[RMDB]
RNA sequence: GGGAACGACUCGAGUAGAGUCGAAAAUGUACGUCAUGCUCUGCAGCCACGCGUUGACGAUGCCGACGAACGGCUCGCGCAGCGCGAGCGUCACCGCGAGCCCGGCCAGCAUCGCGCCGACGAGCGAAAAAUGCACUACCUUCGGGUAGUGCAUUUUAAAAGAAACAACAACAACAAC
Reactivity to 2A3 in 0.01 (KOAc 150mM, MgCl2 10mM, bicine 150mM(pH8.5), 24C), signal-to-noise 1, nucleotides 027 to 126: u130g020u080a050c060g060u040c040a050u130g040c010u010c000u060g050c060a000g070c030c040a080c020g090c000g010u000u110g030a080c000g010a020u160g000c030c010g050a120c030g030a210a080c060g010g010c000u000c020g070c000g040c000a080g030c000g030c030g040a030g000c020g110u080c030a060c060c000g010c020g040a000g020c000c000c010g020g000c030c010a000g040c000a040u030c020g040c020g030c070c000g110a110c010g030a020g000c050g000a090
Reactivity to DMS in 0.01 (KOAc 150mM, MgCl2 10mM, bicine 150mM(pH8.5), 24C), signal-to-noise 3, nucleotides 027 to 126: u000g000u010a100c090g020u010c070a100u000g010c050u010c040u000g040c110a080g010c040c100a120c050g020c040g000u010u010g000a130c000g000a060u000g000c000c040g010a060c080g050a120a100c200g000g020c000u000c020g000c020g000c100a180g000c030g010c240g000a090g000c010g040u000c050a100c300c020g020c030g000a040g010c000c050c010g020g010c020c030a080g000c010a030u000c010g020c050g000c050c050g000a070c050g000a150g000c020g010a010
Record summary:
An RNA of 177 nucleotides, treated with 2A3 and DMS and read out base by base. Reactivities are given for positions 27 through 126. The reactions ran in a buffer of 150 mM KOAc, 10 mM MgCl2 and 150 mM bicine (pH 8.5), at 24 C. The data come from the RNA Mapping Database (RMDB), library OK2TRN.